Source: RMDB library OK2TRN, as collected in RNAgym. This 177-nucleotide RNA was probed chemically with 2A3 and DMS. Reactivities are given for positions 27 through 126. For 2A3, 2,086 sequencing reads were counted. For DMS, 4,508 sequencing reads were counted. DMS adducts were read by reverse transcription with MarathonRT. Conditions: 150 mM KOAc, 10 mM MgCl2 and 150 mM bicine (pH 8.5), 24 C.
RNA sequence: GGGAACGACUCGAGUAGAGUCGAAAAAAACGUGUGCGCCGAUUGACUAAGGGUUCCUGGGUCAAGCUGAUCUGCCCAGGGUAAGUCGGGACCUAAGGCGAGGCCGACAGGCGUAGUCGAUGGAUAACACCAUAUGCUCUUUCGAGAGCAUAUGGUGAAAAGAAACAACAACAACAAC
Reactivity to 2A3 in 0.01 (KOAc 150mM, MgCl2 10mM, bicine 150mM(pH8.5), 24C), signal-to-noise 1, nucleotides 027 to 126: a000a010a020c060g020u110g030u080g000c040g040c000c000g050a070u050u100g030a030c040u080a060a070g100g020g030u080u080c010c000u010g010g000g050u110c080a070a010g050c140u230g090a120u080c010u040g000c020c000c030a010g020g020g000u030a010a020g010u010c000g040g060g000a110c000c000u050a100a060g100g000c050g000a020g010g000c020c000g030a060c030a060g010g000c000g010u000a020g060u000c000g010a010u030g040g030a020u130a110a010
Reactivity to DMS in 0.01 (KOAc 150mM, MgCl2 10mM, bicine 150mM(pH8.5), 24C), signal-to-noise 4, nucleotides 027 to 126: a020a050a070c090g010u000g030u000g000c040g010c010c010g010a130u000u010g010a050c080u000a090a100g010g000g010u000u010c000c010u000g020g010g020u010c070a090a060g010c110u010g000a090u000c040u000g000c000c000c010a050g000g010g000u010a040a050g010u000c010g010g000g000a120c030c010u020a110a140g000g010c070g010a130g000g000c030c020g010a080c300a080g020g010c020g010u000a230g000u000c010g000a110u010g000g000a120u020a110a170